[RMDB]
RNA sequence: GGGAACGACUCGAGUAGAGUCGAAAAAUUUCCAUCAUUUCAAGAAAGUUGGGCUAAAAAAAUUACACCUGAAGAUGCUCAUGUUAAUUUUGAAAGCAUGAACACGCAACAAAUAUACAACAUGAGCAGAGCUUUUAAUCACGUAUGGUGCAUUUUAACCCUCACUAAUGUUCGCAUUAGUGAGGGUAAAAGAAACAACAACAACAAC
Reactivity to 2A3 in 0.01 (KOAc 150mM, MgCl2 10mM, bicine 150mM(pH8.5), 24C), signal-to-noise 1, nucleotides 027 to 156: a030u060u000u000c060c000a010u130c000a080u140u230u160c100a110a050g060a180a190a080g110u010u050g000g010g020c070u170a000a010a000a250a000a000a000u140u010a000c030a000c010c000u050g030a010a010g040a040u010g000c000u010c000a000u000g000u010u030a190a130u090u020u040u030g070a190a000a030g000c000a010u100g080a100a020c160a040c230g000c030a000a080c010a000a130a050u180a000u060a050c050a010a010c000a000u000g000a000g000c000a030g000a000g130c000u070u060u060u280a100a050u170c030a030c110g030u030a070u110g000g000u000g060c000a000u140u140u040u110a100